[RMDB]
Notes:
Structure probing data (DMS and 2A3) for a 177-nucleotide construct. The RNA was probed in 150 mM KOAc, 10 mM MgCl2 and 150 mM bicine (pH 8.5) at 24 C. It was measured as part of the RMDB library M2PK50. 2A3 adducts were read by reverse transcription with SuperScript II with manganese. DMS adducts were read by reverse transcription with MarathonRT.
RNA sequence: GGGAACGACUCGAGUAGAGUCGAAAAGCUGUUCUGUUCGCAGAACAGCAAAGGGAAGCAUCUCAAGCAUUUCAAGGUAGGCAGCACCAAGCAUUUCAAAAAAAACGGAUAAGUUCGCUUAUCCGAACCUAUAAUGUGCCUUCGGGCACAUUAUAGGAAAAGAAACAACAACAACAAC
Reactivity to DMS in 0.01 (KOAc 150mM, MgCl2 10mM, bicine 150mM(pH8.5), 24C), signal-to-noise 2, nucleotides 027 to 126: g000c000u020g000u000u000c000u000g030u000u000c180g010c000a030g000a000a040c000a010g000c010a010a030a070g020g020g000a030a090g000c030a060u000c030u010c080a030a100g000c110a080u000u000u000c050a060a090g020g000u000a090g000g000c060a040g000c040a040c060c070a060a070g010c080a080u000u000u020c020a000a000a000a050a050a060a100a160c030g000g010a000u000a000a000g010u000u010c250g000c010u010u000a000u000c000c000g010a020a080
Reactivity to 2A3 in 0.01 (KOAc 150mM, MgCl2 10mM, bicine 150mM(pH8.5), 24C), signal-to-noise 2, nucleotides 027 to 126: g010c010u000g000u000u010c000u000g040u040u120c270g070c060a000g010a000a000c010a010g000c010a020a020a040g070g000g040a040a010g030c000a070u050c030u010c040a040a070g020c040a140u000u110u180c060a070a020g060g000u010a030g080g000c030a000g020c010a050c010c010a000a020g040c000a020u060u190u240c220a090a080a030a020a000a000a040a040c000g000g000a000u000a000a000g000u040u110c140g040c090u010u010a000u000c000c000g010a000a000